Description: Chemical mapping of a 177-nucleotide RNA with 2A3 and DMS. Conditions: 150 mM KOAc, 10 mM MgCl2 and 150 mM bicine (pH 8.5), 24 C. 2A3 adducts were read by reverse transcription with SuperScript II with manganese. It was measured as part of the RMDB library OK1LIB. The DMS profile rests on 1,389 reads.
[RMDB]
RNA sequence: GGGAACGACUCGAGUAGAGUCGAAAAGUGCUUAUCUCACUGUAUAACAAUUGCUACAUCGAGCAGGCGAUGACAUACUGGAUUGUCAAGAACCAAGGAGUCGCGGCAAUUUUUGCACAGUUGGAGGCGUGAGAGGGACUUUCGAGUCCCUCUCACGAAAAGAAACAACAACAACAAC
Reactivity to 2A3 in 0.01 (KOAc 150mM, MgCl2 10mM, bicine 150mM(pH8.5), 24C), signal-to-noise 3, nucleotides 027 to 126: g130u110g010c030u100u130a080u100c000u000c000a040c000u000g020u000a060u000a050a060c070a050a050u030u080g000c000u080a060c010a070u060c070g090a050g090c050a130g040g020c020g020a050u060g000a000c000a010u100a070c060u090g080g040a080u140u110g080u150c050a070a080g080a090a070c010c000a030a060g050g030a040g050u070c030g000c050g020g000c000a000a000u000u050u000u020u020g030c000a000c030a010g020u030u030g050g000a020g000g070
Reactivity to DMS in 0.01 (KOAc 150mM, MgCl2 10mM, bicine 150mM(pH8.5), 24C), signal-to-noise 2, nucleotides 027 to 126: g070u070g000c000u000u060a070u060c000u010c100a010c010u000g000u000a160u000a020a040c040a000a040u000u030g000c000u000a180c130a120u010c080g030a100g000c130a180g030g000c040g000a160u010g000a140c020a070u000a040c300u000g000g000a060u070u020g000u070c150a090a040g000a150a100c010c050a090a030g020g000a200g000u030c120g000c050g060g050c040a020a000u000u000u000u030u000g020c070a000c110a080g040u020u000g000g000a080g020g000